[RMDB]
RNA sequence: GGGAACGACUCGAGUAGAGUCGAAAACAAUCAACAAUAUGGUUUGUGUAGUUAUGCUGAAAAUCGUUGAGGUCGUAUGGAAUAGGUUAACCGUAAGACCUUAAGUUGAAAAACUUUAAAAUUAAUCAAAAUCAUGUACACUUCGGUGUACAUGAAACCCUUCUAUCAAGUUCGCUUGAUAGAAGGGAAAAGAAACAACAACAACAAC
Reactivity to DMS in 0.01 (KOAc 150mM, MgCl2 10mM, bicine 150mM(pH8.5), 24C), signal-to-noise 1, nucleotides 027 to 156: c020a100a130u000c000a000a110c050a130a190u000a190u000g000g000u000u000u000g020u000g020u000a100g010u000u010a070u000g030c020u000g000a050a080a080a070u000c070g010u000u000g010a020g030g000u000c010g000u000a020u000g030g000a120a110u010a070g010g040u000u010a090a260c050c000g060u010a050a050g000a030c000c000u000u010a010a090g000u000u000g000a070a080a170a030a040c030u000u020u000a000a060a030a130u000u010a050a210u010c030a030a050a110a170u000c000a010u010g000u000a000c000a030c000u010u010c300g080g000u000g020u010a000c010a000u000g000a030a050a080
Reactivity to 2A3 in 0.01 (KOAc 150mM, MgCl2 10mM, bicine 150mM(pH8.5), 24C), signal-to-noise 4, nucleotides 027 to 156: c050a020a070u150c030a010a070c020a110a120u090a100u200g050g020u050u080u060g060u060g030u050a100g060u090u130a070u150g010c050u100g100a070a050a070a060u100c050g040u040u070g010a000g000g000u000c000g010u020a010u040g020g020a100a080u080a140g120g010u140u110a080a030c020c000g000u000a000a050g000a000c010c000u000u000a030a010g000u000u020g010a080a020a020a040a040c030u080u170u240a070a100a090a100u160u160a050a080u050c050a060a120a020a070u020c000a000u000g000u000a000c000a000c000u030u040c120g090g010u000g000u000a010c000a000u000g000a010a000a010
Notes
This 207-nucleotide RNA was probed chemically with DMS and 2A3. The data come from the RNA Mapping Database (RMDB), library M2RFPK. The reactions ran in a buffer of 150 mM KOAc, 10 mM MgCl2 and 150 mM bicine (pH 8.5), at 24 C. 2A3 adducts were read by reverse transcription with SuperScript II with manganese.